The record gives the reactivity of an RNA of 177 nucleotides to DMS and 2A3. Source: RMDB library RFM100, as collected in RNAgym. For DMS, 2,600 sequencing reads were counted. 2A3 adducts were read by reverse transcription with SuperScript II with manganese.
RNA sequence: GGGAACGACUCGAGUAGAGUCGAAAAGCAUAUUUCUGUUUCUGGAGGAUUAUUUAUAAUCUGCCGGAAAGUCUUGCAGGUGGCUGGGAUAUGUUCAGUCUGGUAGAAUUAAGCACGCUUUAAUUCCCUACAGGCUCAUUUUCGAAUGAGCCUGUAGAAAAGAAACAACAACAACAAC
Reactivity to DMS in 0.01 (KOAc 150mM, MgCl2 10mM, bicine 150mM(pH8.5), 24C), signal-to-noise 2, nucleotides 027 to 126: g000c030a090u010a040u010u010u030c030u010g000u020u000u000c000u000g000g000a200g010g000a000u000u000a020u020u000u070a050u000a040a010u000c000u000g020c030c010g000g000a020a010a040g020u000c060u030u010g000c040a100g010g010u000g020g010c010u000g000g000g000a090u050a040u030g010u000u000c050a040g000u020c050u060g000g010u030a050g020a030a060u000u000a100a090g000c120a080c150g020c030u010u010u000a100a190u000u000c000c030
Reactivity to 2A3 in 0.01 (KOAc 150mM, MgCl2 10mM, bicine 150mM(pH8.5), 24C), signal-to-noise 3, nucleotides 027 to 126: g010c000a010u050a090u150u130u030c070u070g100u050u000u020c000u000g000g010a020g020g000a010u020u030a050u030u200u060a170u040a060a040u010c010u040g040c010c000g000g010a010a000a000g030u010c020u050u080g050c080a050g000g100u080g040g010c020u000g000g020g000a040u040a040u230g120u070u070c030a020g100u030c040u050g030g010u070a040g010a040a050u080u080a060a000g040c050a000c070g050c010u070u000u030a060a030u120u000c010c010